[RMDB]
RNA sequence: GGGAACGACUCGAGUAGAGUCGAAAACUCAGGGGGCAGGCCUGAGCCCUGCACCCGCCCCACGACCGUCCAGCCCCUGACGGGGCACCCCAUCCUGAGGGGCUCUGCAUUGGCCCCCACCGAGGCAUGGUCAAGAAUGAUUCGUCAUUCUUGACCAAAAAGAAACAACAACAACAAC
Reactivity to DMS in 0.01 (KOAc 150mM, MgCl2 10mM, bicine 150mM(pH8.5), 24C), signal-to-noise 2, nucleotides 027 to 126: c040u000c040a120g010g020g000g000g040c040a030g010g020c010c090u020g000a130g000c060c000c000u010g010c010a030c030c000c060g000c020c010c010c030a120c100g000a070c080c000g000u000c030c070a160g000c030c010c010c030u020g000a150c220g000g040g000g000c000a020c000c010c000c000a060u020c050c050u000g000a120g020g000g010g000c020u000c070u030g000c050a070u060u020g000g000c000c010c000c010c050a050c090c040g010a040g000g010c090a120
Reactivity to 2A3 in 0.01 (KOAc 150mM, MgCl2 10mM, bicine 150mM(pH8.5), 24C), signal-to-noise 3, nucleotides 027 to 126: c030u050c020a030g000g020g020g000g010c030a030g020g010c010c140u150g030a020g010c010c000c000u010g000c010a030c000c030c000g000c010c010c000c000a030c020g090a050c020c020g050u040c010c040a030g010c020c010c000c010u050g040a120c160g000g000g000g000c000a020c030c000c000c000a040u040c010c040u070g030a130g010g010g000g010c000u020c010u050g040c000a100u060u140g070g010c030c000c000c000c000a010c020c040g030a040g000g070c070a100
The record gives the reactivity of an RNA of 177 nucleotides to DMS and 2A3.
The data come from the RNA Mapping Database (RMDB), library RFM100.
For 2A3 the reverse transcriptase was SuperScript II with manganese.
For DMS the reverse transcriptase was MarathonRT.
The reactions ran in a buffer of 150 mM KOAc, 10 mM MgCl2 and 150 mM bicine (pH 8.5), at 24 C.